Description
Source: RMDB library OK2TRN, as collected in RNAgym. Chemical mapping of a 177-nucleotide RNA with 2A3 and DMS. The RNA was probed in 150 mM KOAc, 10 mM MgCl2 and 150 mM bicine (pH 8.5) at 24 C. DMS adducts were read by reverse transcription with MarathonRT. 2A3 adducts were read by reverse transcription with SuperScript II with manganese. The 2A3 profile rests on 4,396 reads.
RNA sequence: GGGAACGACUCGAGUAGAGUCGAAAAGCGCAGCCGCCGGCGGCCAAACGGCGGCCGGACGCCACGGCCGCACCACGCGCCGCGAUCGCGCACCAUGUGAAGUUCGAGGGGCUUCAGGCGCUGUCCGGGAUAGCGCCUUAUUCGUAAGGCGCUAUCCAAAAGAAACAACAACAACAAC
Reactivity to 2A3 in 0.01 (KOAc 150mM, MgCl2 10mM, bicine 150mM(pH8.5), 24C), signal-to-noise 3, nucleotides 027 to 126: g010c000g010c030a020g050c060c060g080c050c060g120g000c020g040g000c020c010a120a120a020c070g050g010c000g000g010c010c010g040g100a030c050g060c060c020a020c010g000g020c000c030g020c020a050c030c040a050c050g070c000g000c000c000g020c030g030a070u120c070g000c010g030c060a030c030c050a130u180g050u030g100a040a040g020u070u120c120g090a160g010g100g000g000c000u020u010c030a040g060g000c000g000c050u030g000u010c020c030g000
Reactivity to DMS in 0.01 (KOAc 150mM, MgCl2 10mM, bicine 150mM(pH8.5), 24C), signal-to-noise 6, nucleotides 027 to 126: g010c010g010c000a060g020c110c030g010c040c090g010g010c010g010g030c030c030a050a130a160c270g010g010c010g010g020c010c010g020g010a050c080g010c200c110a100c020g000g000c010c020g020c010a050c070c090a130c300g000c110g020c010c000g020c020g000a050u010c100g000c060g010c020a160c070c060a090u000g010u010g000a020a040g000u000u010c070g010a140g010g000g000g000c030u010u000c020a040g010g000c020g010c030u000g000u000c020c020g000